[RMDB]
RNA sequence: GGGAACGACUCGAGUAGAGUCGAAAAUAAUAGCUUGUGCAUCUGCUUUGUUACCUCUAUACCAUUGUGUAUAGUACCUUACACUGCAUUGUACUAUUAUGCUACAUUCUAUUUUACUAAUGAGCCUAGCUUAUGCUUAGUUCGCUAAGCAUAAGCUAAAAGAAACAACAACAACAAC
Reactivity to DMS in 0.01 (KOAc 150mM, MgCl2 10mM, bicine 150mM(pH8.5), 24C), signal-to-noise 2, nucleotides 027 to 126: u010a120a170u010a000g000c040u020u000g010u000g010c000a020u000c270u010g030c020u000u010u000g010u000u020a060c090c090u000c000u000a000u000a010c000c020a240u010u010g030u020g020u000a020u000a000g010u000a040c200c120u000u000a030c010a020c010u000g010c010a030u010u010g020u010a030c030u000a050u000u020a050u010g010c020u010a020c220a090u000u000c050u000a020u000u000u000u000a090c030u000a080a140u000g010a040g020c040c000u000
Reactivity to 2A3 in 0.01 (KOAc 150mM, MgCl2 10mM, bicine 150mM(pH8.5), 24C), signal-to-noise 2, nucleotides 027 to 126: u100a000a020u020a000g000c010u030u060g010u000g000c000a020u020c060u060g000c000u020u030u030g010u010u020a040c010c030u000c010u000a000u000a000c030c040a290u140u290g010u000g000u150a000u000a010g010u010a020c010c010u020u020a000c020a000c000u010g000c000a010u010u020g010u030a000c030u040a080u240u070a090u190g000c000u010a030c020a030u030u000c030u050a040u010u060u010u020a120c060u060a110a140u140g030a010g020c000c010u000
Structure probing data (DMS and 2A3) for a 177-nucleotide construct.
As a SHAPE reagent, 2A3 marks flexible, mostly unpaired nucleotides at the ribose 2'-OH.
The reactions ran in a buffer of 150 mM KOAc, 10 mM MgCl2 and 150 mM bicine (pH 8.5), at 24 C.
2A3 adducts were read by reverse transcription with SuperScript II with manganese.
DMS adducts were read by reverse transcription with MarathonRT.
Source: RMDB library 15KREP, as collected in RNAgym.